[RMDB]
RNA sequence: GGGAACGACUCGAGUAGAGUCGAAAACGAUAGCCCCCGGCCUCCCUCGCUCCUUAGGCCGCGGUCAGUCCGGGCCCUUGCUCUGGCAUGAGGUCCAUUGCUGCCGCGAAGAGUUCGUCUCUGUCAGCCUUGAGGUGGCCAGCAUGGAAUUGGCGGGACUUUAUAUUCGAUUCGUCGAAUAUAAAGUAAAAGAAACAACAACAACAAC
Reactivity to 2A3 in 0.01 (KOAc 150mM, MgCl2 10mM, bicine 150mM(pH8.5), 24C), signal-to-noise 2, nucleotides 027 to 156: c040g130a130u170a110g140c030c000c000c000c030g100g060c040c000u040c010c000c010u000c010g020c000u010c000c010u010u010a000g000g000c000c010g000c000g000g020u270c050a000g010u070c110c140g000g020g000c020c000c000u000u020g010c010u100c180u300g180g010c000a010u010g000a080g110g000u000c000c000a030u030u270g000c000u000g000c000c000g000c000g020a030a010g000a000g000u060u130c160g140u080c060u000c000u030g140u120c090a020g020c000c000u040u030g020a010g000g000u050g010g030c000c000a000g050c010a050u130g020g080a060a080u140u100g020g010c020g010g010g020
Reactivity to DMS in 0.01 (KOAc 150mM, MgCl2 10mM, bicine 150mM(pH8.5), 24C), signal-to-noise 2, nucleotides 027 to 156: c050g030a180u000a090g000c000c000c000c010c010g020g000c000c010u000c040c020c000u000c130g010c020u000c030c010u000u010a080g020g020c010c010g000c020g000g000u000c000a040g010u010c260c210g020g050g040c000c010c020u020u010g020c000u000c170u020g050g000c010a050u010g050a170g010g020u000c020c020a110u000u010g010c020u000g010c010c020g000c010g000a050a060g020a050g030u000u010c140g040u010c010u000c010u010g020u000c080a090g010c030c010u000u010g030a120g040g000u000g020g010c010c030a040g010c070a120u000g000g030a090a130u000u000g010g000c030g000g000g010